[RMDB]
Source: RMDB library OK2TRN, as collected in RNAgym. Structure probing data (DMS and 2A3) for a 177-nucleotide construct. The reactions ran in a buffer of 150 mM KOAc, 10 mM MgCl2 and 150 mM bicine (pH 8.5), at 24 C. DMS adducts were read by reverse transcription with MarathonRT. For 2A3 the reverse transcriptase was SuperScript II with manganese. The DMS profile rests on 9,891 reads.
RNA sequence: GGGAACGACUCGAGUAGAGUCGAAAAGUGUGAAACGGUUUUCGGAAAAGAUGCGCGUCAAAGCAAAGAAUUAGAGCCCAAUCUGAUUCAUUCAGAUCGAAACGCGCUCUAAAAAAGCUUGCCACCAUAAAUCAUACUAGUUCGCUAGUAUGAUUUAAAAAGAAACAACAACAACAAC
Reactivity to DMS in 0.01 (KOAc 150mM, MgCl2 10mM, bicine 150mM(pH8.5), 24C), signal-to-noise 8, nucleotides 027 to 126: g020u010g020u000g010a060a050a100c060g010g010u000u000u010u000c080g010g000a120a090a100a110g000a060u000g020c010g020c020g010u000c070a070a090a120g010c060a080a110a160g000a060a070u000u000a020g000a050g010c060c080c080a060a130u000c010u000g000a010u000u000c090a110u010u000c110a070g010a060u000c100g000a090a100a050c080g010c100g020c000u000c010u000a000a050a080a060a040a030g000c020u000u000g010c060c020a040c030c050a150
Reactivity to 2A3 in 0.01 (KOAc 150mM, MgCl2 10mM, bicine 150mM(pH8.5), 24C), signal-to-noise 4, nucleotides 027 to 126: g040u040g000u020g050a070a030a060c040g020g030u030u030u070u090c060g060g080a060a090a050a050g030a050u150g010c050g000c010g010u050c050a060a020a040g020c030a090a050a030g040a040a050u040u020a020g000a020g040c030c060c000a010a030u020c000u000g010a010u070u060c030a030u100u070c030a070g120a180u050c030g070a060a060a030c010g000c000g000c000u000c010u000a050a050a000a000a000a000g010c010u050u150g040c030c000a020c010c000a050